This 177-nucleotide RNA was probed chemically with 2A3 and DMS.

RNA sequence: GGGAACGACUCGAGUAGAGUCGAAAAGAUAUGGAGUUCUCGAUUCCAUGAACUACGUCGGAUCGGAAACGAUCCGCGCAUGGACAGGAUUGAACUCCUAAGUCAAAGGUACAGUUCGCUGUACCAAUCACCGACUAUUGUUCGCAAUAGUCGGUGAAAAAGAAACAACAACAACAAC
Reactivity to 2A3 in 0.01 (KOAc 150mM, MgCl2 10mM, bicine 150mM(pH8.5), 24C), signal-to-noise 2, nucleotides 027 to 126: g010a000u050a050u180g010g000a000g000u000u000c050u020c060g080a190u170u000c010c020a000u050g070a130a150c110u240a060c220g300u300c040g170g000a010u000c000g000g050a040a060a050c000g000a000u000c000c000g000c020g020c000a030u010g000g000a020c060a050g220g270a300u110u100g000a020a000c000u000c000c000u000a120a010g030u000c050a090a140a070g030g000u010a010c000a030g000u010u090c100g140c140u000g010u000a010c000c000a010a030
Reactivity to DMS in 0.01 (KOAc 150mM, MgCl2 10mM, bicine 150mM(pH8.5), 24C), signal-to-noise 2, nucleotides 027 to 126: g000a040u000a300u010g010g020a000g020u000u000c020u010c130g000a200u010u000c000c000a040u000g000a080a100c110u000a110c020g030u030c000g020g020a030u000c000g000g020a070a100a130c020g010a020u000c010c000g000c030g010c000a000u030g000g000a230c300a070g000g000a010u010u020g000a000a000c000u000c000c010u010a000a090g000u000c030a100a110a110g000g000u010a000c000a000g010u000u010c230g040c010u000g000u000a000c000c000a070a070
High 2A3 reactivity points to a flexible backbone, as in loops and unpaired stretches. Source: RMDB library TTRDEL, as collected in RNAgym. The reactions ran in a buffer of 150 mM KOAc, 10 mM MgCl2 and 150 mM bicine (pH 8.5), at 24 C. Reactivities are given for positions 27 through 126. For 2A3, 3,009 sequencing reads were counted.